[RMDB]
RNA sequence: GGGAACGACUCGAGUAGAGUCGAAAAUUCCCCUAUUUCGAUAGGGGAACACCUGCGGGCGGCUCGCAGUUCCGACAUCCUCCUCCUCUGAGUCAAAGGGCGAUAGGCCUCGGUUCGCCGAGGCCAAGGUUGGAUUCAAAUUCGUUUGAAUCCAACCAAAAGAAACAACAACAACAAC
Reactivity to DMS in 0.01 (KOAc 150mM, MgCl2 10mM, bicine 150mM(pH8.5), 24C), signal-to-noise 2, nucleotides 027 to 126: u000u000c000c000c000c010u000a010u000u000u010c130g010a030u000a020g000g000g010g000a000a010c130a050c070c020u000g010c030g000g010g030c090g010g010c040u000c030g000c030a120g000u020u000c020c010g030a110c100a110u000c020c040u020c040c010u000c060c010u000c010u010g000a130g010u000c040a060a080a140g020g000g020c060g010a080u000a080g010g010c000c000u010c000g000g000u000u010c190g010c000c020g000a030g000g010c010c000a000a010
The record gives the reactivity of an RNA of 177 nucleotides to DMS. For DMS, 1,419 sequencing reads were counted.